[RMDB]
RNA sequence: GGGAACGACUCGAGUAGAGUCGAAAAGAGCUCUCAUUCCUUCCUCUGAUUGAGGAGACAGGCUGUAAGUUAUGGGUUUUGAAAGCAUAACAGUGCCAUGAAAACAUCUAAUGUUAUCUUCAUCCCAAUUAUGAACCCAGAUAUUGGCUCCAAGGCAAAUUAUGUCGCUGUUCGCAGCGACAUAAUUAAAAGAAACAACAACAACAAC
Reactivity to 2A3 in 0.01 (KOAc 150mM, MgCl2 10mM, bicine 150mM(pH8.5), 24C), signal-to-noise 3, nucleotides 027 to 156: g030a000g000c020u000c010u020c090a090u090u060c020c010u030u060c060c020u040c020u100g210a300u240u180g030a040g010g000a010g040a000c030a000g030g020c010u000g040u130a040a000g040u040u030a030u080g000g020g000u100u130u090u030g130a120a020a020g050c060a010u010a050a010c000a030g000u020g060c060c010a060u080g030a060a100a020a080c020a040u020c000u170a150a050u050g030u030u030a030u000c010u040u010c010a060u000c030c010c010a040a060u140u110a070u110g040a020a040c020c000c000a010g030a060u130a060u060u100g070g010c020u010c030c030a080a000g070g000c010a070
Reactivity to DMS in 0.01 (KOAc 150mM, MgCl2 10mM, bicine 150mM(pH8.5), 24C), signal-to-noise 1, nucleotides 027 to 156: g000a180g030c060u000c000u000c020a150u000u000c040c050u000u020c010c000u000c040u000g040a190u020u000g030a050g000g000a070g000a030c040a070g030g020c020u000g000u000a080a150g030u000u010a090u010g010g010g000u000u000u000u010g050a070a040a050g020c100a090u000a030a090c020a090g000u000g000c070c040a120u010g000a090a110a050a030c020a050u000c130u000a070a070u000g010u000u000a030u000c020u000u000c060a040u000c040c040c000a090a110u000u000a080u010g020a040a060c030c000c040a070g000a130u000a050u000u000g010g050c020u000c030c050a030a090g010g000c090a120
Structure probing data (2A3 and DMS) for a 207-nucleotide construct. Reactivities are given for positions 27 through 156. For 2A3 the reverse transcriptase was SuperScript II with manganese. The RNA was probed in 150 mM KOAc, 10 mM MgCl2 and 150 mM bicine (pH 8.5) at 24 C. The 2A3 profile rests on 1,251 reads.